RNA sequence: GGGAACGACUCGAGUAGAGUCGAAAAUGAUUAAGAACAGAGGGGAUGCUGGAAAAAAAGGAAAGGCAGGGAGGAGACGAGGAGGUCCAGGAACUGGACUUGCAUUUAUUUGGCGGCAAGAAAUGCGCAUACCCGUUACCUGACCAGCAAUAGGUCAGCUACUGAUAGGGUUCGCCCUAUCAGUAGCAAAAGAAACAACAACAACAAC
Reactivity to 2A3 in 0.01 (KOAc 150mM, MgCl2 10mM, bicine 150mM(pH8.5), 24C), signal-to-noise 1, nucleotides 027 to 156: u130g010a020u030u230a030a060g000a010a000c020a080g060a020g000g000g030g030a020u060g020c080u070g010g020a050a010a050a030a030a000a020g000g030a050a010a030g020g030c100a030g030g000g000a030g010g000a000g000a000c030g000a090g020g020a030g010g030u020c050c030a000g000g040a040a050c090u010g030g050a030c000u020u110g010c000a050u010u050u100a160u000u060u170g050g000c000g010g030c000a000a050g060a060a050a050u020g000c040g000c030a010u070a140c000c020c030g020u040u010a100c010c030u020g000a000c000c000a010g030c020a070a210u090a090g010g060u050c020a010